[RMDB]
RNA sequence: GGGAACGACUCGAGUAGAGUCGAAAAGAUAUGGAUGUAGGUACCAGCGAAGAACUCGGAAACGAGGGAGCUGCGUACUACAUCCUAAGUCAAAACCCCUUACAUUAGUUCGCUAAUGUAAGGGGAAUCACUAUGUUGUCUUCGGACAACAUAGUGAAAAAGAAACAACAACAACAAC
Reactivity to DMS in 0.01 (KOAc 150mM, MgCl2 10mM, bicine 150mM(pH8.5), 24C), signal-to-noise 4, nucleotides 027 to 126: g010a040u010a300u000g000g010a010u010g010u000a000g010g020u000a030c070c010a000g000c000g000a100a160g010a110a170c000u010c000g010g000a110a080a210c010g000a010g000g000g000a070g010c010u000g020c270g000u000a040c000u000a010c000a000u000c000c000u000a000a070g010u010c040a050a080a130a140c000c000c000c000u000u000a000c000a010u000u000a010g010u000u020c230g010c000u000a000a000u000g010u000a010a010g010g000g000g000a000a000
Reactivity to 2A3 in 0.01 (KOAc 150mM, MgCl2 10mM, bicine 150mM(pH8.5), 24C), signal-to-noise 3, nucleotides 027 to 126: g010a020u060a040u160g010g000a000u010g010u030a030g230g090u060a000c010c000a010g030c020g190a300a060g030a070a050c000u000c010g020g030a090a090a030c020g000a010g000g010g010a010g010c010u020g020c110g010u010a010c000u000a000c010a000u000c000c000u000a030a000g030u010c030a010a040a160a300c010c010c000c000u010u000a000c000a000u000u000a000g030u040u080c300g000c200u000a000a000u010g000u010a000a000g000g000g000g000a000a020
The record gives the reactivity of an RNA of 177 nucleotides to DMS and 2A3. The data come from the RNA Mapping Database (RMDB), library TTRDEL. The DMS profile rests on 3,971 reads. The RNA was probed in 150 mM KOAc, 10 mM MgCl2 and 150 mM bicine (pH 8.5) at 24 C. The 2A3 profile rests on 9,661 reads.